[RMDB]
RNA sequence: GGGAACGACUCGAGUAGAGUCGAAAAAGGCGACUAACGAAGAACGUGAAGACACGCGACUCAACUGCAGGCUUGCAGCCGAUACGAGCAAGCUGUAAGAGCAUAAUUGAGAAUGCACAGCGGUCGCAAUAUUAUUUAUAUUCGUAUAAAUAAUAUUAAAAGAAACAACAACAACAAC
Reactivity to DMS in 0.01 (KOAc 150mM, MgCl2 10mM, bicine 150mM(pH8.5), 24C), signal-to-noise 4, nucleotides 027 to 126: a140g030g020c030g010a030c030u030a080a180c070g010a150a110g010a150a110c050g000u000g010a130a140g010a110c070a080c110g000c030g010a220c020u000c010a050a060c090u000g010c040a120g010g010c000u000u000g000c000a030g010c040c070g010a120u020a090c190g030a130g020c080a170a070g000c010u000g010u010a030a030g030a090g010c010a020u000a080a130u020u010g000a070g000a120a060u040g010c040a080c090a100g000c160g000g010u010c010g010c020
Reactivity to 2A3 in 0.01 (KOAc 150mM, MgCl2 10mM, bicine 150mM(pH8.5), 24C), signal-to-noise 4, nucleotides 027 to 126: a000g100g000c010g000a020c040u090a100a020c060g110a110a130g030a140a040c020g030u060g090a080a010g070a060c050a000c090g010c000g030a040c000u000c010a010a030c020u010g000c010a040g210g160c010u010u000g000c000a000g030c020c040g090a080u110a200c080g010a060g050c050a040a000g010c000u000g010u060a020a040g010a010g040c010a020u040a100a010u100u030g010a020g040a140a080u120g020c040a030c020a060g050c030g020g010u040c000g000c000
This 177-nucleotide RNA was probed chemically with DMS and 2A3. Conditions: 150 mM KOAc, 10 mM MgCl2 and 150 mM bicine (pH 8.5), 24 C. The 2A3 profile rests on 2,321 reads. DMS adducts were read by reverse transcription with MarathonRT.